[RMDB]
RNA sequence: GGGAACGACUCGAGUAGAGUCGAAAACGUUACAAGGGGUACGGUGUCCCGCUUGCUGACAAGGACGCUAUUCUUCUCUACAACCUCGAUGGCCCCACUCAGCACUUUAACAGCGAUAAUACUCGCGCGGUAGCGCGCUGUUCGCAGCGCGCUACCGAAAAGAAACAACAACAACAAC
Reactivity to 2A3 in 0.01 (KOAc 150mM, MgCl2 10mM, bicine 150mM(pH8.5), 24C), signal-to-noise 5, nucleotides 027 to 126: c040g030u100u140a060c050a130a070g040g000g020g010u020a030c060g040g050u050g020u050c000c000c000g020c030u020u080g000c030u040g010a090c020a060a070g070g000a010c020g010c040u050a150u080u030c020u100u000c020u000c020u080a100c040a140a100c020c030u010c030g030a050u110g040g000c000c000c040c000a020c010u030c020a020g000c010a020c080u020u070u180a150a060c030a030g030c000g000a030u110a200a110u150a290c050u010c000g000c000g000
Reactivity to DMS in 0.01 (KOAc 150mM, MgCl2 10mM, bicine 150mM(pH8.5), 24C), signal-to-noise 1, nucleotides 027 to 126: c040g010u000u000a000c270a050a110g000g090g000g000u000a080c130g010g020u020g000u000c100c000c000g000c070u050u000g090c110u000g040a000c150a080a040g000g000a020c040g020c050u040a070u000u000c020u000u000c000u000c050u000a100c030a070a110c120c090u000c000g040a180u030g000g030c080c000c000c110a030c090u000c000a000g000c000a110c060u000u000u000a040a080c210a160g000c000g000a020u000a020a150u070a120c030u000c040g000c000g060